This 207-nucleotide RNA was probed chemically with 2A3. High 2A3 reactivity points to a flexible backbone, as in loops and unpaired stretches. Source: RMDB library OK3TST, as collected in RNAgym. The reactions ran in a buffer of 150 mM KOAc, 10 mM MgCl2 and 150 mM bicine (pH 8.5), at 24 C. For 2A3, 712 sequencing reads were counted.
[RMDB]
RNA sequence: GGGAACGACUCGAGUAGAGUCGAAAAGCUGCCUGGCCUAGGACUCACCCUUCAGGACAGUGGGCUCCCCUCUGGUCCAGGGUAGGUCUAAAAAUGCCAUCCAAGAGCCAAGUCAUAGAACUGGGGACUCUAAGAACCUGCUUGGUGCUGUACCCCACACCGCAUAUUACUUCGGUAAUAUGCGGUGAAAAGAAACAACAACAACAAC
Reactivity to 2A3 in 0.01 (KOAc 150mM, MgCl2 10mM, bicine 150mM(pH8.5), 24C), signal-to-noise 1, nucleotides 027 to 156: g100c040u080g030c000c000u000g000g020c010c010u100a200g050g000a040c030u040c040a010c020c000c000u080u180c140a080g000g000a010c000a010g000u070g060g000g000c150u160c060c040c010c000u000c000u020g170g050u020c000c010a010g000g020g000u040a060g000g020u000c030u110a110a110a000a000a060u070g010c000c000a000u000c030c010a050a000g000a000g020c010c020a040a000g000u060c040a130u070a070g060a060a000c040u030g010g000g060g060a020c020u020c020u060a060a040g040a070a050c040c010u100g050c030u050u050g020g010u020g050c050u080g050u150a130c060c030c020c020a010